[RMDB]
RNA sequence: GGGAACGACUCGAGUAGAGUCGAAAAUAAGCACCUCGUUAGGUGAGGCGGCUACACGAACAUAGGCCACUGACCCCGAACGUCGAUAGACGCCCCGGGUCAGGACAGCUCUUCCCGGCUUAAGGGUAAAAUCACAACGUCUUCGGACGUUGUGAAAGAAUAAGUAGUACUUCGGUACUACUUAUUCAAAAGAAACAACAACAACAAC
Reactivity to 2A3 in 0.01 (KOAc 150mM, MgCl2 10mM, bicine 150mM(pH8.5), 24C), signal-to-noise 4, nucleotides 027 to 156: u160a020a010g020c000a010c010c010u000c010g100u110u300a140g030g120u150g070a010g010g040c090g040g000c020u080a030c080a040c120g170a210a020c050a120u170a150g080g070c020c020a030c010u000g000a000c010c000c030c030g050a080a010c000g000u000c010g100a230u160a300g010a000c000g030c000c060c060c050g000g000g000u000c000a000g000g020a010c020a000g010c000u000c050u020u030c020c000c000g020g000c050u110u100a070a090g060g000g040u070a050a050a020a100u020c000a000c000a000a010c000g000u010c000u030u070c090g080g010a000c010g000u000u000g000u000g000a000a000a000
Reactivity to DMS in 0.01 (KOAc 150mM, MgCl2 10mM, bicine 150mM(pH8.5), 24C), signal-to-noise 1, nucleotides 027 to 156: u010a070a060g010c010a040c020c000u010c000g020u000u010a110g040g010u000g000a060g030g000c010g040g030c010u000a040c050a240c090g000a100a060c030a160u000a120g020g010c000c020a230c000u010g000a060c030c010c000c040g010a080a010c010g020u000c010g010a300u000a140g000a040c020g020c020c020c060c170g000g000g000u000c010a010g020g000a050c060a140g020c010u000c030u000u000c000c000c000g020g000c050u000u000a100a050g020g010g000u000a030a020a110a200u000c000a000c000a010a010c000g000u000c000u000u010c300g020g000a030c000g020u000u010g010u010g010a020a000a080